[RMDB]
RNA sequence: GGGAACGACUCGAGUAGAGUCGAAAAUGUAGUCUCAUCAAUCCAGAUGAACUGGGAGAAAACCACAGGAGCUUUUCCUUACUUCAAAGAGUCUGUCUUUGAAAAAUUUCUGACAACACCAGCUGACCUCCUACGAAGUAUUCGUACUUCGUAGGAGAAAAGAAACAACAACAACAAC
Reactivity to 2A3 in 0.01 (KOAc 150mM, MgCl2 10mM, bicine 150mM(pH8.5), 24C), signal-to-noise 1, nucleotides 027 to 126: u150g020u020a070g060u020c010u000c090a030u040c010a060a090u010c030c020a000g030a070u050g090a070a140c000u000g000g020g100a040g040a030a090a030a010c110c060a030c060a120g060g060a010g030c030u120u090u150u110c000c010u070u000a100c010u040u020c000a040a040a000g010a060g180u170c100u060g050u000c000u090u030u080g030a050a080a020a020a020u060u060u060c020u040g020a010c040a050a030c000a120c010c040a020g120c040u030g070a050c000
Reactivity to DMS in 0.01 (KOAc 150mM, MgCl2 10mM, bicine 150mM(pH8.5), 24C), signal-to-noise 1, nucleotides 027 to 126: u000g040u000a090g030u000c040u000c010a030u000c030a110a160u010c040c090a050g000a110u000g000a080a120c030u000g000g000g000a040g000a090a050a080a130c080c130a070c140a030g020g020a040g010c090u000u010u030u000c010c010u010u020a080c120u010u000c010a000a040a010g010a080g010u000c110u020g000u010c010u010u000u010g000a000a000a090a130a060u010u000u000c030u000g010a090c060a060a030c080a090c070c000a080g020c060u000g000a210c160

The record gives the reactivity of an RNA of 177 nucleotides to 2A3 and DMS.
DMS adducts were read by reverse transcription with MarathonRT.
2A3 adducts were read by reverse transcription with SuperScript II with manganese.